[RMDB]
Structure probing data (2A3 and DMS) for a 207-nucleotide construct. DMS adducts were read by reverse transcription with MarathonRT. In probing experiments dimethyl sulfate is read out at A N1 and C N3, which are open when not base-paired. 2A3 adducts were read by reverse transcription with SuperScript II with manganese. It was measured as part of the RMDB library M2RFPK.
RNA sequence: GGGAACGACUCGAGUAGAGUCGAAAAGGGGCUGACAGGAAUCGACAGUAGAGUGUAUCAUGUCAGUAAGCAUGCCGGGGAAUGGUGGUUUACCCCGUUAUCAAAUGAUUACCGUCCAAUAAUUGGCUUAGCUCGUUGGGCUUCGGCCCAACGAGAAGGGCAUAUAAUGAUUCGUCAUUAUAUGCCCAAAAGAAACAACAACAACAAC
Reactivity to 2A3 in 0.01 (KOAc 150mM, MgCl2 10mM, bicine 150mM(pH8.5), 24C), signal-to-noise 5, nucleotides 027 to 156: g020g020g010g000c020u010g020a010c020a020g040g070a040a090u130c080g050a040c060a050g130u190a040g080a050g060u100g010u040a060u120c030a030u030g040u030c010a010g020u050a060a010g040c050a050u100g070c030c000g000g000g000g010a040a040u040g010g020u010g010g030u040u040u080a040c010c000c000c010g040u020u030a040u040c030a010a030a060u070g030a020u080u070a020c000c010g060u070c020c050a050a060u170a190a110u130u080g050g000c050u110u120a060g020c000u010c000g000u000u000g010g000g000c000u020u020c100g120g000c000c000c000a000a000c000g000a000g000a000a010
Reactivity to DMS in 0.01 (KOAc 150mM, MgCl2 10mM, bicine 150mM(pH8.5), 24C), signal-to-noise 2, nucleotides 027 to 156: g020g010g010g040c000u010g020a090c060a070g030g010a150a100u000c050g000a090c040a150g010u000a140g020a130g040u000g010u000a050u000c060a070u000g030u010c020a080g000u010a100a110g000c020a060u000g000c070c010g000g040g030g000a060a110u000g020g010u000g000g010u000u000u000a160c000c000c010c000g000u000u010a040u000c300a060a050a070u000g010a080u000u000a020c000c020g040u000c050c030a060a080u010a070a130u000u000g010g000c070u000u000a160g020c000u000c000g050u010u010g000g000g000c020u000u000c300g020g010c000c010c010a000a000c010g000a000g000a020a120